[RMDB]
RNA sequence: GGGAACGACUCGAGUAGAGUCGAAAAAGCAGGACCGCGUUACGACGCGGUCCUGCAGCAAUGAGUAGAAGCGGUCAAAUUUGGUGUCGAGUUCCAACAAACCAAAUUCGGGCAUUGCUCAAUGCAAAAAACUCUCUUUAGUUCGCUAAAGAGAGAAGUAAAUCACUAUGUUCGCAUAGUGAUUUACAAAAGAAACAACAACAACAAC
Reactivity to DMS in 0.01 (KOAc 150mM, MgCl2 10mM, bicine 150mM(pH8.5), 24C), signal-to-noise 1, nucleotides 027 to 156: a140g020c020a080g070g020a010c100c000g040c000g000u000u010a190c280g070a220c050g060c000g080g000u010c020c000u020g010c020a000g000c120a050a080u010g000a090g040u000a050g010a070a070g010c020g020g020u010c020a060a030a010u000u000u000g000g040u000g030u000c040g010a180g020u000u050c120c040a090a110c030a080a150a060c020c000a010a000a040u010u000c050g000g020g000c060a150u000u000g010c000u000c030a050a100u000g030c020a000a090a110a020a070a090c010u000c010u000c000u000u010u000a010g020u000u000c300g000c020u000a010a020a010g020a000g020a020g000a010a110
Reactivity to 2A3 in 0.01 (KOAc 150mM, MgCl2 10mM, bicine 150mM(pH8.5), 24C), signal-to-noise 2, nucleotides 027 to 156: a010g000c010a020g010g000a000c000c020g030c030g030u060u060a150c300g040a010c030g020c000g000g000u000c000c000u000g010c000a000g000c000a000a030u010g000a000g000u030a030g020a110a000g060c080g040g000u030c020a000a030a010u000u000u000g030g010u060g090u170c100g130a090g080u150u140c060c020a050a050c050a070a170a000c010c000a000a010a010u030u030c030g000g030g000c020a020u060u010g000c000u010c000a020a040u000g000c000a020a010a000a040a060a100c000u000c000u000c000u000u010u000a010g020u040u050c180g030c110u000a000a000a000g000a000g000a000g000a000a000